[RMDB]
RNA sequence: GGGAACGACUCGAGUAGAGUCGAAAAGAUAUGGAGCAUCCCACAGAGCGCGGAUCGGAAACGAUCCGAACUACGCUUUGUGGGAGUGCUCCUAAGUCAAAGACACUCAGCUUCGGCUGAGUGUCAAGCCUCAAAAAAUGUUCGCAUUUUUUGAGGCAAAAGAAACAACAACAACAAC
Reactivity to DMS in 0.01 (KOAc 150mM, MgCl2 10mM, bicine 150mM(pH8.5), 24C), signal-to-noise 1, nucleotides 027 to 126: g000a050u010a300u000g000g000a020g000c000a090u000c000c020c000a030c000a000g000a010g000c050g000c000g000g030a030u000c010g000g030a100a080a280c040g010a030u000c020c000g000a020a020c150u020a300c040g000c010u000u000u000g000u000g000g000g000a010g000u010g000c000u000c000c030u000a040a070g020u000c020a110a150a060g000a010c000a010c000u000c000a020g040c000u000u010c300g040g000c000u000g010a000g020u000g010u000c010a010a090